Structure probing data (DMS and 2A3) for a 177-nucleotide construct.
It was measured as part of the RMDB library OK2TST.
For DMS, 858 sequencing reads were counted.
Values cover nucleotides 27 to 126.
The RNA was probed in 150 mM KOAc, 10 mM MgCl2 and 150 mM bicine (pH 8.5) at 24 C.
For 2A3 the reverse transcriptase was SuperScript II with manganese.
RNA sequence: GGGAACGACUCGAGUAGAGUCGAAAAUGCAAGCAAGAUGCUGGAGGAAUCUAGUUACAUUCAUAACAAAAACAAACCCUACUCGACGUAAAGAGUAUGUGUAUGUAUGCUGCGGCGUCUCCAUUGACACGAUAGCGAGUUUCGACUCGCUAUCGUGAAAAGAAACAACAACAACAAC
Reactivity to DMS in 0.01 (KOAc 150mM, MgCl2 10mM, bicine 150mM(pH8.5), 24C), signal-to-noise 2, nucleotides 027 to 126: u000g050c030a070a060g000c160a070a070g020a060u010g010c010u010g000g040a150g000g030a130a070u010c050u000a040g020u000u020a090c130a110u000u000c040a040u000a080a060c130a040a050a050a120a040c140a090a130a040c080c010c070u000a040c000u000c010g000a150c300g010u000a060a030a100g000a040g000u000a020u010g010u010g000u020a020u000g000u000a010u000g030c030u000g000c110g020g000c070g010u010c030u000c060c080a070u000u000g000a240
Reactivity to 2A3 in 0.01 (KOAc 150mM, MgCl2 10mM, bicine 150mM(pH8.5), 24C), signal-to-noise 2, nucleotides 027 to 126: u060g000c010a010a090g010c000a030a040g060a080u050g000c010u030g020g060a040g020g070a050a090u050c050u040a090g040u050u050a060c050a080u040u110c010a020u060a190a090c090a040a150a020a000a000c030a040a130a080c040c000c000u000a000c020u020c000g090a090c090g130u170a080a120a010g000a010g050u050a000u090g100u010g020u000a020u080g040u000a050u070g100c010u010g000c010g080g000c000g000u010c000u000c000c000a070u030u170g070a010